An RNA of 177 nucleotides, treated with 2A3 and read out base by base. The 2A3 profile rests on 573 reads. It was measured as part of the RMDB library OK1LIB. For 2A3 the reverse transcriptase was SuperScript II with manganese. The reactions ran in a buffer of 150 mM KOAc, 10 mM MgCl2 and 150 mM bicine (pH 8.5), at 24 C.
RNA sequence: GGGAACGACUCGAGUAGAGUCGAAAACGCGACCCUAUCACUGCAAUCCCAUCUCGAUUGACCGCAAAACACCGCGGGAACAGGCGUCUAUGCAGUAAGAGACAGCUAUGCGGGCACGCAGGUUGCGACCCCCUGCGGGAUUCGUCCCGCAGGGGGUAAAAGAAACAACAACAACAAC
Reactivity to 2A3 in 0.01 (KOAc 150mM, MgCl2 10mM, bicine 150mM(pH8.5), 24C), signal-to-noise 2, nucleotides 027 to 126: c000g030c000g000a070c010c000c080u130a140u050c010a070c010u060g050c000a000a100u060c000c000c000a000u010c040u060c070g050a050u000u130g170a130c060c000g000c000a000a040a040a090c150a030c010c070g000c050g070g010g000a040a030c030a000g090g000c010g000u010c020u000a140u210g080c030a010g140u250a230a000g050a010g040a110c020a150g020c050u120a160u240g030c000g000g000g000c080a010c200g000c010a000g020g000u000u000g000c000g010